[RMDB]
RNA sequence: GGGAACGACUCGAGUAGAGUCGAAAAGAAAAGUCGUUUCGACGACUUUUCAAAAACCUUUGUGAACCCAGAGCUAUGAAGCACAGGAGCCCAUUGGGCUCCAGUGUGGAGCUCGGGUUCACUCUGGUAAACUUCGCGAAUGUUCGCAUUCGCGAAGCUCUACAAUACGGUUCGCCGUAUUGUAGAGAAAAGAAACAACAACAACAAC
Reactivity to 2A3 in 0.01 (KOAc 150mM, MgCl2 10mM, bicine 150mM(pH8.5), 24C), signal-to-noise 2, nucleotides 027 to 156: g000a000a000a000a000g000u010c000g000u020u080u160c190g050a030c010g000a000c000u000u000u000u020c020a010a000a000a010a000c000c000u030u010u000g010u010g010a030a040c040c060c150a210g000a010g010c010u060a100u300g010a000a000g010c010a000c030a040g000g020a010g000c000c000c120a300u280u300g000g000g000c000u000c030c030a050g010u000g000u020g010g040a000g010c000u000c000g000g000g010u000u000c000a000c000u000c000u020g000g010u020a070a090a100c010u020u020c000g000c000g010a000a000u000g040u100u180c300g010c120a000u000u000c000g000c000g000a000a000g000
An RNA of 207 nucleotides, treated with 2A3 and read out base by base. Conditions: 150 mM KOAc, 10 mM MgCl2 and 150 mM bicine (pH 8.5), 24 C. The data come from the RNA Mapping Database (RMDB), library RNAMAK.